The record gives the reactivity of an RNA of 177 nucleotides to DMS and 2A3. For DMS, 2,443 sequencing reads were counted. The 2A3 profile rests on 888 reads. It was measured as part of the RMDB library RFMREP. For 2A3 the reverse transcriptase was SuperScript II with manganese. Values cover nucleotides 27 to 126.

[RMDB]
RNA sequence: GGGAACGACUCGAGUAGAGUCGAAAAAGGUAUUUACUUGCAUUUUUUUGCAAAAUAUCCAUAAAUGCGUCUGUUACAGUUUUGGAAGAUCAAUAUUACUCGCCUUUUACUCUUCUUUCGUUUUGAAUCUAGCAUAAAAGUUCGCUUUUAUGCUAGAAAAAGAAACAACAACAACAAC
Reactivity to DMS in 0.01 (KOAc 150mM, MgCl2 10mM, bicine 150mM(pH8.5), 24C), signal-to-noise 3, nucleotides 027 to 126: a100g010g010u000a010u000u000u000a090c210u000u000g010c020a000u010u000u010u020u020u010u000g000c010a040a020a020a050u010a040u010c000c040a090u000a040a080a050u000g020c090g010u010c080u010g010u000u000a090c060a080g010u000u000u000u000g000g000a090a060g000a060u000c070a040a030u000a060u010u000a090c130u000c050g000c050c020u000u000u000u010a050c050u010c020u000u000c060u000u000u000c040g020u000u000u010u000g020a130a130
Reactivity to 2A3 in 0.01 (KOAc 150mM, MgCl2 10mM, bicine 150mM(pH8.5), 24C), signal-to-noise 2, nucleotides 027 to 126: a030g020g000u060a060u010u100u050a060c050u020u020g030c040a080u010u000u000u060u160u210u060g000c040a010a000a040a040u080a020u010c000c000a030u110a150a080a000u000g020c030g090u030c090u170g140u080u150a050c010a040g000u000u060u170u110g070g050a090a000g030a080u090c040a100a070u060a060u120u070a010c030u010c020g070c020c000u080u040u020u130a040c020u080c050u110u090c040u030u110u080c040g040u020u000u000u010g010a000a030